[RMDB]
RNA sequence: GGGAACGACUCGAGUAGAGUCGAAAAUGAGACAAACACGCUUCACAAUGUGCGGCAAAGAAACAUUGUUUAUGCAAAGGCACUUCGCAAUGUGUGCUCAAAAAUUGCUUAUUCAAACACGCUUCACAAAAGAAUCAGUGGUUCGCCACUGAUUCAAGCAGGCAAUACGCUUCGGCGUAUUGCCUGCAAAAGAAACAACAACAACAAC
Reactivity to 2A3 in 0.01 (KOAc 150mM, MgCl2 10mM, bicine 150mM(pH8.5), 24C), signal-to-noise 2, nucleotides 027 to 156: u150g010a020g010a000c060a060a130a000c070a000c110g020c010u010u000c010a000c010a040a040u010g000u000g010c000g010g030c100a110a140a000g110a060a030a000c060a020u010u000g050u080u120u170a080u090g040c020a090a000a040g020g000c010a000c010u080u070c110g000c170a140a160u060g000u020g010u010g090c010u040c050a050a160a090a000a020u090u030g000c010u070u140a080u190u140c040a020a080a000c070a010c100g040c040u100u100c040a030c030a070a090a010a000g000a000a000u000c000a000g000u010g000g040u020u050c180g020c060c000a010c000u000g000a000u000u000c000a000a000